[RMDB]
RNA sequence: GGGAACGACUCGAGUAGAGUCGAAAAAGGCGCUACUAAAGCAAUGCUAUCAAGCGCUUGACUUGUUGUAUCAUCAACUUGUUGAUUUGUUCUAUUAUUCGUAAUAUCUGUCAUGGCUUGAUUUACAUCUAAGAUCUUUGUUCGCAAAGAUCUUAGAAAAAGAAACAACAACAACAAC
Reactivity to DMS in 0.01 (KOAc 150mM, MgCl2 10mM, bicine 150mM(pH8.5), 24C), signal-to-noise 5, nucleotides 027 to 126: a070g010g000c050g020c010u000a100c180u000a090a070a060g020c050a120a110u010g000c040u010a100u010c140a080a030g010c010g010c050u000u000g010a060c050u000u000g010u000u000g000u000a100u010c160a070u000c020a020a020c050u000u000g010u000u000g000a060u010u010u000g010u010u000c060u000a050u000u010a100u000u020c120g010u000a030a020u000a030u000c060u000g000u000c050a030u000g010g000c040u000u000g010a040u010u000u010a070c120a150
Reactivity to 2A3 in 0.01 (KOAc 150mM, MgCl2 10mM, bicine 150mM(pH8.5), 24C), signal-to-noise 1, nucleotides 027 to 126: a040g050g000c040g060c040u110a030c050u130a150a000a160g000c100a140a120u230g020c040u080a020u120c040a120a000g010c120g090c000u030u040g000a020c000u020u050g010u090u080g050u120a190u220c090a020u040c020a060a030c040u060u100g080u080u060g010a050u020u080u150g090u060u050c010u050a110u110u010a050u010u090c030g060u000a020a040u040a090u160c010u040g080u050c010a040u060g040g030c030u020u020g000a000u090u080u040a010c000a020